Description: The record gives the reactivity of an RNA of 207 nucleotides to 2A3 and DMS. DMS adducts were read by reverse transcription with MarathonRT. The 2A3 profile rests on 10,860 reads. For DMS, 9,174 sequencing reads were counted.

[RMDB]
RNA sequence: GGGAACGACUCGAGUAGAGUCGAAAAGCGUACUACCCUUGACAUGCGAAUCACCAUGGGAGUGAGCUCCCAAAUAGGAGCUCACUUUGAUCAUGGGAAUCGCAACAGCAAGGGUAUCGCAAAGUGAGCAUCUAUGGUUCGCCAUAGAUGCUCACAACAUGGUACAUUGAUUCGUCAAUGUACCAUGAAAAGAAACAACAACAACAAC
Reactivity to 2A3 in 0.01 (KOAc 150mM, MgCl2 10mM, bicine 150mM(pH8.5), 24C), signal-to-noise 5, nucleotides 027 to 156: g010c010g010u110a130c060u010a010c030c010c010u010u010g080a180c040a080u050g000c000g030a040a060u110c080a090c260c010a000u000g000g000g030a000g000u000g000a000g010c000u040c000c040c040a180a230a050u280a050g000g000a000g000c000u000c000a010c010u000u010u030g030a050u040c000a000u000g010g010g000a000a020u010c000g000c020a030a030c060a020g030c000a000a000g010g020g000u060a010u100c000g020c020a010a030a000g000u000g000a000g000c010a000u000c000u000a010u000g020g050u030u130c250g030c050c000a000u000a000g000a000u000g000c000u000c000a000c000a000a000
Reactivity to DMS in 0.01 (KOAc 150mM, MgCl2 10mM, bicine 150mM(pH8.5), 24C), signal-to-noise 3, nucleotides 027 to 156: g020c020g010u000a060c060u000a050c000c000c000u000u000g020a040c080a300u020g010c010g010a050a060u000c040a160c000c000a020u010g000g010g010a010g020u000g000a020g010c010u000c000c010c020a020a100a160u000a040g000g000a030g010c000u000c000a010c000u000u000u000g000a100u010c010a020u000g020g020g010a120a090u000c010g000c020a020a040c080a160g020c010a030a020g010g020g030u000a000u000c010g030c010a090a080a180g010u010g020a000g010c000a000u000c010u000a000u010g010g000u000u010c300g030c030c010a030u000a000g010a020u010g000c010u010c000a000c000a010a130